[RMDB]
RNA sequence: GGGAACGACUCGAGUAGAGUCGAAAAUUACGAACCUGGUAGCGACGGGCGUGUGCUGUCAGUCCUCACGAACCCGUCUGUUGUUACGACUGAGGUUUUGCCGCUGGACUGGACACCGCUGCGUGUAGCAGUAGGGACGUUUCGACGUCCCUACUGCAAAAGAAACAACAACAACAAC
Reactivity to 2A3 in 0.01 (KOAc 150mM, MgCl2 10mM, bicine 150mM(pH8.5), 24C), signal-to-noise 2, nucleotides 027 to 126: u140u080a090c050g010a010a030c000c020u060g120g050u080a050g050c030g110a060c000g000g030g000c050g030u250g000u020g060c050u000g090u070c000a010g040u000c000c000u010c000a040c030g020a000a020c030c010c050g020u080c090u080g020u080u090g140u110u190a040c060g000a000c020u050g010a300g020g090u030u020u040u260g120c090c040g060c090u020g000g000a000c000u000g010g010a010c000a000c000c050g000c050u080g020c010g000u070g030u040a020
Reactivity to DMS in 0.01 (KOAc 150mM, MgCl2 10mM, bicine 150mM(pH8.5), 24C), signal-to-noise 2, nucleotides 027 to 126: u030u010a110c180g000a090a220c000c010u010g020g030u000a090g020c120g000a050c020g000g000g010c000g020u010g020u000g000c100u000g020u000c020a020g020u000c000c010u000c050a160c030g020a020a030c010c000c000g000u000c000u000g020u010u000g010u010u020a100c150g020a030c040u000g030a140g030g010u000u000u000u000g090c160c090g040c090u000g010g010a020c000u000g010g000a050c010a020c040c020g000c020u000g030c040g020u000g010u020a150